[RMDB]
Structure probing data (2A3) for a 207-nucleotide construct.
The data come from the RNA Mapping Database (RMDB), library OK3TST.
The reactions ran in a buffer of 150 mM KOAc, 10 mM MgCl2 and 150 mM bicine (pH 8.5), at 24 C.
RNA sequence: GGGAACGACUCGAGUAGAGUCGAAAACCCCGUGUGGAACACACGACUAAGCUUCGGCUUAGUAAGAGCAACUUAGGAUUGUAGGCUCCCCGGCGUGUCUCGAACCAUGCCGGGCCAAACCCAUAGGGCUGGCGGUCCCUGUGCGGUCACGAUUCAAACUAGGAUGAGCUUUCGAGCUCAUCCUAGUAAAAGAAACAACAACAACAAC
Reactivity to 2A3 in 0.01 (KOAc 150mM, MgCl2 10mM, bicine 150mM(pH8.5), 24C), signal-to-noise 2, nucleotides 027 to 156: c020c010c000c000g010u060g000u030g010g200a180a050c040a000c000a000c060g060a020c010u000a000a000g010c020u020u200c300g030g010c000u000u000a000g000u000a110a000g020a000g000c030a040a180c070u050u100a080g050g050a060u040u060g020u050a030g000g060c010u000c010c000c000c000g000g000c000g010u040g020u020c070u110c170g070a040a020c030c000a010u020g000c000c020g000g000g010c000c000a020a010a000c010c000c000a000u020a010g010g020g030c010u040g070g170c060g000g030u100c000c000c000u010g000u010g020c140g010g030u020c040a020c050g010a010u050u060c020a050a070